[RMDB]
This 177-nucleotide RNA was probed chemically with 2A3 and DMS. DMS adducts were read by reverse transcription with MarathonRT. The DMS profile rests on 21,990 reads. The RNA was probed in 150 mM KOAc, 10 mM MgCl2 and 150 mM bicine (pH 8.5) at 24 C. For 2A3 the reverse transcriptase was SuperScript II with manganese.
RNA sequence: GGGAACGACUCGAGUAGAGUCGAAAAGGCUAGUUUGCUAUCGUAGUCUUUUGGCUACGCUCGAAAGAGGUACAGGAUCACCUCCAACUGUACCGCGAUAGCACGGAGGUGAAUUUUUAUAGCCGAAGGGUUGCUGCUACUUCGGUAGCAGUGACCCAAAAGAAACAACAACAACAAC
Reactivity to 2A3 in 0.01 (KOAc 150mM, MgCl2 10mM, bicine 150mM(pH8.5), 24C), signal-to-noise 8, nucleotides 027 to 126: g000g000c010u030a020g130u120u140u160g030c050u060a030u070c020g050u010a030g040u020c010u030u170u080u170g010g000c010u070a060c070g020c030u040c030g100a050a040a020g060a020g000g020u030a010c020a010g040g030a060u060c020a010c020c010u000c010c010a100a050c010u030g010u020a010c000c010g020c000g030a060u060a010g010c050a030c080g010g000a010g020g000u010g010a010a020u040u040u010u050u110a130u030a030g040c030c010g030a090a060
Reactivity to DMS in 0.01 (KOAc 150mM, MgCl2 10mM, bicine 150mM(pH8.5), 24C), signal-to-noise 6, nucleotides 027 to 126: g000g000c000u010a010g010u040u020u020g000c010u000a020u000c030g010u000a020g000u010c010u010u020u010u020g010g010c020u020a030c090g010c100u020c080g020a070a090a070g010a080g010g010u000a020c020a020g020g010a130u020c020a070c010c010u000c010c010a130a170c030u010g000u000a030c020c030g010c140g000a070u010a010g010c010a090c170g000g000a050g000g020u010g020a040a030u010u020u020u020u020a070u000a030g010c000c020g010a100a140